[RMDB]
RNA sequence: GGGAACGACUCGAGUAGAGUCGAAAAGAUAUGGAAUACAGCACUCUUUGAUCUGUAUCACGUCGGAAACGACGUGAGUACAGGGAGAGUGGUAUUCCUAAGUCAAACGCCAGGUUCGCCUGGCGAACCUGUCAAAUAUGUUCGCAUAUUUGACAGGAAAAGAAACAACAACAACAAC
Reactivity to DMS in 0.01 (KOAc 150mM, MgCl2 10mM, bicine 150mM(pH8.5), 24C), signal-to-noise 9, nucleotides 027 to 126: g000a030u000a300u010g000g000a020a000u000a010c010a170g030c020a010c010u000c000u000u000u020g010a080u010c010u000g010u000a040u000c000a010c000g020u000c000g010g000a150a090a260c010g010a010c000g030u000g000a040g020u000a010c000a010g000g000g010a010g010a010g050u000g000g010u000a000u000u000c000c000u000a030a100g010u000c040a110a130a210c030g020c000c000a010g000g010u000u010c300g020c010c010u000g000g010c000g000a010a050
Reactivity to 2A3 in 0.01 (KOAc 150mM, MgCl2 10mM, bicine 150mM(pH8.5), 24C), signal-to-noise 6, nucleotides 027 to 126: g020a010u080a050u190g010g030a020a000u030a020c100a190g300c020a160c010u040c020u300u300u170g160a200u120c000u020g000u000a010u020c000a000c000g000u000c000g030g000a070a060a050c010g010a000c010g000u010g010a000g000u010a000c000a010g030g050g020a020g000a000g000u010g000g010u000a000u000u000c000c000u000a120a020g050u010c040a170a070a100c030g000c000c000a010g020g070u080u120c300g100c120c000u000g000g000c000g000a000a010
Chemical mapping of a 177-nucleotide RNA with DMS and 2A3. The 2A3 profile rests on 54,902 reads.